Structure probing data (2A3 and DMS) for a 177-nucleotide construct. Reactivities are rounded to 0.1 and cut off at 0 and 3. The reactions ran in a buffer of 150 mM KOAc, 10 mM MgCl2 and 150 mM bicine (pH 8.5), at 24 C. 2A3 adducts were read by reverse transcription with SuperScript II with manganese. It was measured as part of the RMDB library TTRDEL.

RNA sequence: GGGAACGACUCGAGUAGAGUCGAAAAGAUAUGGAUGAAGGCGCUACAGAACCGUACAUCGGAAACGAUGUACUCAGUAUGUAGAACUACGCUGAAGUCCUAAGUCAAAGCGGCCUUCGGGCCGCAACAUCUAGAAUUUGUUCGCAAAUUCUAGAUGAAAAGAAACAACAACAACAAC
Reactivity to 2A3 in 0.01 (KOAc 150mM, MgCl2 10mM, bicine 150mM(pH8.5), 24C), signal-to-noise 2, nucleotides 027 to 126: g040a020u100a030u160g000g000a020u060g060a050a050g000g000c010g000c020u010a000c000a010g000a030a000c000c030g000u000a000c000a000u000c000g000g010a060a060a010c020g010a010u000g000u010a000c000u000c000a010g000u000a000u020g010u010a000g000a030a040c030u100a040c030g000c020u020g060a030a010g000u000c000c000u000a160a020g040u020c030a060a120a080g020c000g020g030c010c000u040u150c270g100g000g000c010c000g000c010a000a010
Reactivity to DMS in 0.01 (KOAc 150mM, MgCl2 10mM, bicine 150mM(pH8.5), 24C), signal-to-noise 5, nucleotides 027 to 126: g000a050u010a300u010g000g000a010u000g010a250a240g000g000c010g020c010u000a010c000a010g000a140a110c270c300g000u010a000c000a000u000c000g000g000a130a070a180c010g010a020u000g000u000a000c000u010c010a030g010u000a020u010g000u010a010g020a080a050c120u010a270c020g010c010u000g000a180a300g000u000c000c000u010a050a100g010u000c010a070a100a100g000c000g040g000c000c000u000u020c160g020g020g020c000c010g010c000a000a060